[RMDB]
RNA sequence: GGGAACGACUCGAGUAGAGUCGAAAAAGGACGCGAACAACAAGAAGCCGCAGCAACUUCAGGUCGCCGCGCACGAACUGCCGCUCGAUCUCCGCCUCGCUCGAGUAGCUUUCCCCGGGGAUCCCUCCUCUAAACUAGUCUUCGGACUAGUUUAGAGAAAAGAAACAACAACAACAAC
Reactivity to DMS in 0.01 (KOAc 150mM, MgCl2 10mM, bicine 150mM(pH8.5), 24C), signal-to-noise 2, nucleotides 027 to 126: a060g010g010a120c120g040c040g020a020a090c090a060a070c120a100a100g000a120a150g010c080c050g010c030a070g000c050a040a040c050u000u000c180a090g000g010u000c050g000c110c040g010c120g000c040a070c090g000a050a120c110u010g000c080c030g000c010u020c010g010a070u000c060u000c090c020g010c070c010u000c010g000c020u000c010g010a020g010u000a010g020c170u000u000u000c000c000c000c040g060g010g010g000a100u010c020c010c040u000c060

The record gives the reactivity of an RNA of 177 nucleotides to DMS. For DMS, 1,050 sequencing reads were counted. Conditions: 150 mM KOAc, 10 mM MgCl2 and 150 mM bicine (pH 8.5), 24 C.